[RMDB]
RNA sequence: GGGAACGACUCGAGUAGAGUCGAAAAGAUAUGGAUUGACCGAUAAGCCAUAUAUCGGAAACGAUAUAUUGGCUUUUGACGGAAUCAAUCCUAAGUCAAAACUACGUGAUCUUCGGAUCACGUAGAAGAAUACCGUUACCUUCGGGUAACGGUAUUCAAAAGAAACAACAACAACAAC
Reactivity to 2A3 in 0.01 (KOAc 150mM, MgCl2 10mM, bicine 150mM(pH8.5), 24C), signal-to-noise 1, nucleotides 027 to 126: g030a020u070a060u090g000g000a010u000u000g030a040c010c000g020a100u050a220a030g000c000c000a000u010a000u010a000u000c000g040g000a030a020a030c000g000a000u010a000u000a010u050u300g000g000c010u000u010u010u010g000a000c000g000g030a080a210u030c000a010a000u000c000c010u000a120a000g060u000c020a000a010a070a260c000u020a000c000g000u000g000a000u000c010u010u140c300g100g010a000u000c030a000c010g000u000a000g000a000a000
Reactivity to DMS in 0.01 (KOAc 150mM, MgCl2 10mM, bicine 150mM(pH8.5), 24C), signal-to-noise 2, nucleotides 027 to 126: g000a010u010a300u000g000g000a020u000u010g010a030c010c010g000a100u000a050a020g020c000c000a020u000a000u000a000u000c000g010g030a060a090a180c010g000a000u000a000u000a020u010u010g030g010c000u000u000u010u000g010a180c140g010g000a130a120u010c000a000a010u000c000c000u000a030a140g000u000c020a060a040a140a180c000u000a000c010g030u000g000a010u000c000u000u010c240g020g000a010u000c000a000c000g010u000a000g010a050a060